[RMDB]
RNA sequence: GGGAACGACUCGAGUAGAGUCGAAAAUCGCCGGGCAACUGUUCGCGCCAGUACGACGCGUCGUGUCCUCCGGGCGAGAAGCUGCCGGCAGGCGGUUGGUGCAGUUGGUUGACGAAUUGGCGAGUGGCAACAUCUAUGCCUUCGGGCAUAGAUGUUGAAAAGAAACAACAACAACAAC
Reactivity to DMS in 0.01 (KOAc 150mM, MgCl2 10mM, bicine 150mM(pH8.5), 24C), signal-to-noise 3, nucleotides 027 to 126: u000c010g020c000c010g010g010g010c070a020a010c010u000g020u000u000c030g020c020g010c010c000a080g020u010a090c160g020a050c040g010c100g020u010c130g020u000g010u000c040c020u000c120c080g000g020g010c020g000a080g000a040a060g000c030u010g010c020c020g000g020c170a060g010g020c030g020g000u000u000g000g010u000g010c040a040g000u010u000g010g000u000u000g000a080c070g000a060a140u000u000g010g000c040g020a050g010u000g000g000
Reactivity to 2A3 in 0.01 (KOAc 150mM, MgCl2 10mM, bicine 150mM(pH8.5), 24C), signal-to-noise 1, nucleotides 027 to 126: u020c010g000c000c020g000g060g000c020a010a000c050u080g080u190u050c060g030c100g080c060c000a020g040u090a050c050g040a020c040g060c020g160u110c060g050u000g000u080c000c000u040c060c000g020g010g020c050g000a050g000a030a030g000c010u110g080c000c000g010g060c020a000g040g030c030g000g080u030u050g030g000u090g040c020a070g000u050u090g170g020u090u060g050a040c050g010a140a160u050u040g020g010c040g010a030g030u040g100g110
An RNA of 177 nucleotides, treated with DMS and 2A3 and read out base by base. It was measured as part of the RMDB library OK2TRN. 2A3 adducts were read by reverse transcription with SuperScript II with manganese. Conditions: 150 mM KOAc, 10 mM MgCl2 and 150 mM bicine (pH 8.5), 24 C.